Conditions: 150 mM KOAc, 10 mM MgCl2 and 150 mM bicine (pH 8.5), 24 C. The record gives the reactivity of an RNA of 177 nucleotides to 2A3 and DMS. Reactivities are rounded to 0.1 and cut off at 0 and 3. Source: RMDB library TTRDEL, as collected in RNAgym.
RNA sequence: GGGAACGACUCGAGUAGAGUCGAAAAGAUAUGGACGAAUUACUUUGAUCACCACGUAACAUCGAUCGGAAACGAUCGUGGUGGUGGGAGUAAUAGUCCUAAGUCAAAACCGCGGUUCGCCGCGGAACUUACAUGAGCAGUUCGCUGCUCAUGUAAGAAAAGAAACAACAACAACAAC
Reactivity to 2A3 in 0.01 (KOAc 150mM, MgCl2 10mM, bicine 150mM(pH8.5), 24C), signal-to-noise 4, nucleotides 027 to 126: g010a020u080a030u140g000g010a000c020g060a160a270u010u010a010c030u120u090u170g220a130u180c000a000c010c000a010c020g080u110a140a060c090a300u240c050g030a010u040c040g020g020a080a090a040c010g010a000u020c030g020u020g000g000u000g000g000u000g020g060g000a010g000u000a010a020u000a020g000u000c000c000u000a120a010g020u010c000a020a040a080a130c000c000g000c010g010g000u070u150c300g030c080c010g000c010g000g000a000a010
Reactivity to DMS in 0.01 (KOAc 150mM, MgCl2 10mM, bicine 150mM(pH8.5), 24C), signal-to-noise 4, nucleotides 027 to 126: g000a050u010a300u010g010g010a000c000g020a180a120u000u000a000c000u000u000u000g000a110u010c000a020c000c010a020c010g010u010a090a070c200a010u010c080g000a020u000c010g020g010a130a080a160c000g010a000u000c000g020u010g000g030u010g000g010u000g010g020g020a010g000u000a000a010u000a160g010u000c000c000u010a030a110g010u010c040a100a070a080a080c010c000g020c010g000g000u000u010c250g000c020c010g010c000g000g000a010a030